[RMDB]
RNA sequence: GGGAACGACUCGAGUAGAGUCGAAAAUCGUGUAGUGCCGAAGCAGCCGGCGGGCGCAGUCUUUCACCACCAGGUUGCGCCUGCCGUCGAGACUGUAGGCGGCGUCGACCGCCCAGAAGGCGAACAACGGUCUAUGCUUGUUCGCAAGCAUAGACCGAAAAGAAACAACAACAACAAC
Reactivity to DMS in 0.01 (KOAc 150mM, MgCl2 10mM, bicine 150mM(pH8.5), 24C), signal-to-noise 2, nucleotides 027 to 126: u000c030g010u020g000u030a060g000u030g000c020c000g000a150a160g000c040a100g020c020c020g000g010c000g000g000g000c000g000c030a000g050u020c000u000u050u060c040a020c060c040a040c100c130a030g000g040u000u000g000c000g000c000c010u000g000c000c000g000u000c060g000a180g010a150c010u000g000u010a120g000g030c020g020g000c000g070u010c090g000a080c000c000g000c000c000c020a120g030a120a270g020g010c070g000a020a060c110a040a110
Reactivity to 2A3 in 0.01 (KOAc 150mM, MgCl2 10mM, bicine 150mM(pH8.5), 24C), signal-to-noise 3, nucleotides 027 to 126: u100c040g010u080g050u090a250g070u130g080c000c010g020a060a000g070c070a010g030c020c000g000g000c000g020g000g000c010g000c000a000g000u000c000u060u150u090c140a120c110c020a030c010c040a000g000g020u000u000g000c000g000c000c000u000g010c000c000g000u030c000g000a020g050a080c000u000g050u070a040g050g000c000g000g000c000g110u230c050g000a270c030c000g010c000c010c000a070g050a150a010g040g030c010g030a000a020c020a040a010